[RMDB]
RNA sequence: GGGAACGACUCGAGUAGAGUCGAAAAGAUAUGGAGUGUACAUUUCAGCAAUAACUAUUCGGAAACGAACGAAUUAUUGAACUACUGACCAUACACUCCUAAGUCAAAACCGGCGUUCGCGCCGGAACAAACUCUAGGAGUUCGCUCCUAGAGUUUGAAAAGAAACAACAACAACAAC
Reactivity to 2A3 in 0.01 (KOAc 150mM, MgCl2 10mM, bicine 150mM(pH8.5), 24C), signal-to-noise 2, nucleotides 027 to 126: g030a020u080a030u140g000g000a020g030u000g010u050a030c080a230u080u110u020c030a000g000c000a010a010u020a000a060c070u100a100u080u000c000g030g030a090a120a090c030g040a040a010c020g060a210a300u040u000a010u020u000g000a030a020c030u190a030c010u300g010a030c040c000a010u020a000c010a020c000u000c000c000u040a140a020g050u030c040a000a010a090a180c010c000g000g040c000g040u060u110c300g030c010g020c120c000g000g000a000a010
Reactivity to DMS in 0.01 (KOAc 150mM, MgCl2 10mM, bicine 150mM(pH8.5), 24C), signal-to-noise 3, nucleotides 027 to 126: g000a060u000a300u000g000g020a010g030u020g020u000a000c170a300u000u000u010c020a020g000c000a020a020u000a030a030c080u000a230u000u000c010g010g030a150a070a090c040g000a010a030c090g010a030a100u000u010a010u000u000g000a060a020c070u010a300c010u000g000a020c300c130a200u000a010c010a000c000u000c000c000u000a020a110g000u010c010a060a010a130a100c010c000g000g000c010g010u000u000c220g060c030g030c020c000g030g000a030a100
The record gives the reactivity of an RNA of 177 nucleotides to 2A3 and DMS. Values cover nucleotides 27 to 126. For DMS the reverse transcriptase was MarathonRT. As a SHAPE reagent, 2A3 marks flexible, mostly unpaired nucleotides at the ribose 2'-OH. The data come from the RNA Mapping Database (RMDB), library TTRDEL. For DMS, 1,732 sequencing reads were counted.